[RMDB]
RNA sequence: GGGAACGACUCGAGUAGAGUCGAAAAGGGCGUCAUUUCGAUGACGCCCAUACGUCUACUCCGAUUGGCGAGGUCGACGCCGACGGGCGCGUUUGCCAAUCGCACCGUCCAGAUUCGUCUGGACGAAACGCAUGAAGUUAUUCGUAACUUCAUGCGUAAAAGAAACAACAACAACAAC
Reactivity to 2A3 in 0.01 (KOAc 150mM, MgCl2 10mM, bicine 150mM(pH8.5), 24C), signal-to-noise 5, nucleotides 027 to 126: g000g000g000c010g000u010c010a020u040u080u160c240g090a010u000g000a000c000g000c000c010c000a010u010a000c010g040u010c010u010a010c010u000c010c010g000a010u000u010g000g000c010g010a010g010g080u250c020g030a300c010g030c010c000g180a300c190g070g030g000c010g000c000g010u000u010u010g000c000c000a000a000u000c010g000c020a040c010c040g010u000c000c000a000g010a020u010u060c110g070u000c090u000g010g000a000c000g000a020a010
Reactivity to DMS in 0.01 (KOAc 150mM, MgCl2 10mM, bicine 150mM(pH8.5), 24C), signal-to-noise 4, nucleotides 027 to 126: g020g010g020c000g020u000c000a020u000u000u000c170g000a030u000g020a010c010g000c010c010c010a010u000a010c250g000u000c000u010a020c020u000c010c030g010a010u000u000g010g020c010g010a010g020g010u010c040g010a220c010g010c010c000g020a160c300g010g000g020c010g020c020g000u010u000u010g000c010c010a000a010u000c000g000c110a090c150c030g010u010c000c000a010g000a040u000u020c160g030u000c000u000g010g000a020c010g010a010a050

Structure probing data (2A3 and DMS) for a 177-nucleotide construct.
It was measured as part of the RMDB library M2PK50.
For 2A3, 9,818 sequencing reads were counted.
For DMS, 3,875 sequencing reads were counted.